An RNA of 177 nucleotides, treated with DMS and 2A3 and read out base by base. For 2A3 the reverse transcriptase was SuperScript II with manganese. The 2A3 profile rests on 9,061 reads. The data come from the RNA Mapping Database (RMDB), library M2PK50.
RNA sequence: GGGAACGACUCGAGUAGAGUCGAAAAGCGGGUAACUUCGGUUACCCGCAAAGACGCGUCUCGUCGCGUCGCCGACGCGUCGCGGCGCGUCGCGUCGCGAGAAAAGGACGAAGUUCGCUUCGUCCAAGUAUUUAGAUGGGUUCGCCCAUCUAAAUACAAAAGAAACAACAACAACAAC
Reactivity to DMS in 0.01 (KOAc 150mM, MgCl2 10mM, bicine 150mM(pH8.5), 24C), signal-to-noise 5, nucleotides 027 to 126: g020c000g010g000g010u000a000a010c010u010u010c180g020g000u000u000a000c000c000c010g020c010a000a020a070g010a020c000g010c000g010u000c010u000c010g000u000c010g020c000g010u000c010g010c050c100g030a110c250g010c010g010u000c010g020c030g000g000c010g010c060g000u000c000g010c020g020u000c000g000c180g000a130g000a070a080a140a120g000g000a010c000g000a010a010g010u000u000c230g010c010u000u000c010g000u000c000c000a010a040
Reactivity to 2A3 in 0.01 (KOAc 150mM, MgCl2 10mM, bicine 150mM(pH8.5), 24C), signal-to-noise 4, nucleotides 027 to 126: g000c000g010g000g010u020a000a000c010u050u090c180g070g000u040u000a010c000c000c000g000c000a000a000a000g000a000c000g000c000g000u000c000u000c020g010u000c000g000c000g010u010c000g040c050c140g250a120c240g000c000g020u000c000g010c010g010g040c000g010c000g000u010c000g000c000g000u010c010g010c050g020a130g100a040a140a020a050g000g010a000c000g000a000a000g010u040u140c200g070c120u000u000c010g000u000c000c000a000a010